The data come from the RNA Mapping Database (RMDB), library OK3TST. This 207-nucleotide RNA was probed chemically with 2A3 and DMS. For 2A3 the reverse transcriptase was SuperScript II with manganese. For 2A3, 2,813 sequencing reads were counted. The RNA was probed in 150 mM KOAc, 10 mM MgCl2 and 150 mM bicine (pH 8.5) at 24 C.
RNA sequence: GGGAACGACUCGAGUAGAGUCGAAAAGAAACAGAAAUCAGAAAUCGGGAUGAUGUAAGUGCAGAUAUGAAAAUUAAGUACAAAAACGUGAUUUAUGAUAUUGUUUCCGUUAUUCCAACUCAAGAUCAUACUUUAUUAAUCAUGUGGAAACGUGGUGCUUACCGAUUGAGUUCGCUCAAUCGGUAAGAAAAGAAACAACAACAACAAC
Reactivity to 2A3 in 0.01 (KOAc 150mM, MgCl2 10mM, bicine 150mM(pH8.5), 24C), signal-to-noise 5, nucleotides 027 to 156: g010a000a030a010c030a000g100a070a170a010u030c010a000g050a040a080a010u030c020g030g030g060a060u110g020a020u060g060u160a120a070g030u030g020c030a020g070a160u140a080u190g100a090a020a030a030u120u100a090a000g020u050a020c060a020a070a050a040a000c080g060u080g030a000u000u010u050a030u020g030a010u010a030u080u090g010u020u010u000c010c000g030u050u060a060u110u000c010c010a040a090c040u080c130a070a050g030a160u130c040a050u100a120c030u120u150u150a090u100u130a140a030u080c020a020u080g020u040g110g000a170a080a010c030g010u010g020g000u060g020
Reactivity to DMS in 0.01 (KOAc 150mM, MgCl2 10mM, bicine 150mM(pH8.5), 24C), signal-to-noise 2, nucleotides 027 to 156: g000a050a060a140c050a100g000a090a120a110u000c010a090g000a080a070a070u010c010g030g030g020a110u020g010a140u000g000u000a070a130g030u010g020c080a110g000a120u000a060u000g000a070a050a100a090u000u000a040a130g020u010a080c080a050a050a090a090a110c070g000u000g000a030u010u000u010a060u020g010a080u010a060u010u010g000u000u000u020c020c020g000u010u000a120u020u010c030c000a110a070c080u000c080a030a080g010a070u000c000a090u010a080c090u000u000u000a100u020u000a050a070u000c010a030u020g010u020g030g010a040a120a030c000g060u000g010g030u000g000